RNA sequence: GGGAACGACUCGAGUAGAGUCGAAAAUACGUCCUGGCCAUCGGCGUGGCCAUCGUCUGCCUCGAUGGUGGUCAUGCUGACGAGCCCGCGCGGGAGGCAGGUCCAGACCUCGGCUCGGACGGGUCGGAGAGCGAGGACGAGGGCGCGCAGGCCGGAGCGCAGGAAACCAAUUCGUUGGUUUCCUGCGAAAAGAAACAACAACAACAAC
Reactivity to DMS in 0.01 (KOAc 150mM, MgCl2 10mM, bicine 150mM(pH8.5), 24C), signal-to-noise 1, nucleotides 027 to 156: u000a080c060g000u000c010c000u000g020g000c060c060a070u000c040g030g040c000g110u010g020g060c020c000a010u000c020g060u000c010u000g030c160c050u000c180g020a020u000g050g070u000g030g060u000c010a050u000g020c020u000g060a020c040g010a160g000c030c000c030g030c010g010c040g000g000g030a100g050g040c030a110g000g030u000c020c010a080g000a110c030c000u000c030g000g000c000u000c000g010g020a110c100g020g010g100u010c000g000g000a090g010a080g020c000g000a300g000g010a010c030g000a140g020g000g020c060g050c060g010c000a060g010g000c020c050g010g020a080g020
Reactivity to 2A3 in 0.01 (KOAc 150mM, MgCl2 10mM, bicine 150mM(pH8.5), 24C), signal-to-noise 2, nucleotides 027 to 156: u230a030c040g060u020c000c020u040g090g060c040c010a090u060c030g010g000c010g020u000g000g000c010c000a020u020c000g030u010c010u130g060c020c050u080c040g100a110u100g000g000u010g010g000u010c000a030u000g000c010u060g010a020c020g010a010g020c000c000c000g000c010g000c000g040g010g000a020g000g040c010a030g000g060u000c000c010a000g020a080c000c000u000c000g000g000c030u030c050g190g200a130c130g030g030g000u040c080g040g040a020g010a010g060c030g000a010g010g010a010c050g040a160g010g090g040c000g000c000g010c000a030g010g000c010c010g030g030a020g020

Notes: Chemical mapping of a 207-nucleotide RNA with DMS and 2A3. For 2A3, 1,810 sequencing reads were counted. Conditions: 150 mM KOAc, 10 mM MgCl2 and 150 mM bicine (pH 8.5), 24 C. DMS adducts were read by reverse transcription with MarathonRT. Source: RMDB library OK3TST, as collected in RNAgym. 2A3 adducts were read by reverse transcription with SuperScript II with manganese.